[RMDB]
RNA sequence: GGGAACGACUCGAGUAGAGUCGAAAAGGAGGAUUCGUCCUCCAAAGGUCCCCUCGCAACGAUCAGCCGUGAACCCGGUCAGGCCCGGAAGGGAGCAGCCGCAGCGGUGACAUUGUGUGCCGGGGUGUGGCUGGUAGAAAAGGAGAGUUCGCUCUCCCUAGUGGUAACUAUUCGUAGUUACCACUAGAAAAGAAACAACAACAACAAC
Reactivity to DMS in 0.01 (KOAc 150mM, MgCl2 10mM, bicine 150mM(pH8.5), 24C), signal-to-noise 2, nucleotides 027 to 156: g020g000a070g020g010a060u000u000c220g010u000c010c010u000c010c000a020a040a080g040g020u000c010c000c010c010u000c030g000c050a090a160c080g000a070u000c010a120g020c040c010g020u000g020a130a140c020c000c000g010g000u000c030a180g010g030c030c010c010g000g060a150a230g010g010g000a120g010c060a220g020c010c010g030c070a210g030c060g010g040u010g010a080c050a130u000u000g040u020g010u000g020c000c020g000g000g000g010u010g000u000g000g030c000u040g000g040u000a070g000a100a050a060a090g020g000a050g000a030g020u000u010c150g000c010u000c000u000c000c020
Reactivity to 2A3 in 0.01 (KOAc 150mM, MgCl2 10mM, bicine 150mM(pH8.5), 24C), signal-to-noise 5, nucleotides 027 to 156: g010g000a010g000g010a010u100u060c150g050u030c070c000u010c020c000a050a020a000g040g020u050c010c000c020c020u130c040g030c040a060a130c040g050a040u050c020a010g020c000c010g030u020g010a050a060c010c030c010g020g040u050c030a030g070g030c000c000c000g120g080a070a080g080g000g010a040g080c030a010g050c010c020g060c090a050g100c070g070g000u040g060a020c040a140u150u210g060u030g060u100g100c010c010g010g000g000g000u040g040u060g010g020c010u000g010g010u060a050g090a030a110a010a010g000g000a000g000a000g010u090u130c160g040c110u010c000u010c000c000
This 207-nucleotide RNA was probed chemically with DMS and 2A3.
For DMS the reverse transcriptase was MarathonRT.
The DMS profile rests on 5,994 reads.
2A3 adducts were read by reverse transcription with SuperScript II with manganese.
The RNA was probed in 150 mM KOAc, 10 mM MgCl2 and 150 mM bicine (pH 8.5) at 24 C.